Background:
The record gives the reactivity of an RNA of 177 nucleotides to DMS and 2A3. The reactions ran in a buffer of 150 mM KOAc, 10 mM MgCl2 and 150 mM bicine (pH 8.5), at 24 C.

[RMDB]
RNA sequence: GGGAACGACUCGAGUAGAGUCGAAAAGAUAUGGAGAAGGAUGCAUACUCGUUGAAAUCGGAAACGAUGGAGAGUCCAUCUUCUCCUAAGUCAUGCUCAAGCGAAAUCUUCGGAUUUCGCUUGAGAACAUGAGCACAAGGUUCGCCUUGUGCUCAUGAAAAGAAACAACAACAACAAC
Reactivity to DMS in 0.01 (KOAc 150mM, MgCl2 10mM, bicine 150mM(pH8.5), 24C), signal-to-noise 4, nucleotides 027 to 126: g010a040u000a300u010g000g020a010g000a030a020g010g010a020u000g030c210a070u000a300c020u000c000g000u010u020g000a060a140a050u000c000g000g000a110a050a190c010g000a020u000g000g010a050g010a000g000u010c300c010a020u000c010u000u000c000u020c000c000u000a030a100g010u010c090a080u020g010c010u000c000a000a010g010c010g000a000a000a010u000c000u000u010c120g000g000a020u000u000u000c000g020c000u000u000g000a000g000a020a120
Reactivity to 2A3 in 0.01 (KOAc 150mM, MgCl2 10mM, bicine 150mM(pH8.5), 24C), signal-to-noise 3, nucleotides 027 to 126: g030a010u090a050u190g010g000a030g020a050a040g300g210a020u020g010c030a080u170a300c010u020c000g260u300u050g010a030a040a000u000c020g000g070a090a050a050c030g000a010u020g030g020a040g000a000g020u000c010c000a010u020c000u000u000c000u000c000c000u000a070a040g040u040c030a050u170g030c010u010c010a000a000g000c020g020a010a000a010u000c040u080u130c300g010g040a040u020u030u010c020g010c000u010u000g000a000g010a000a000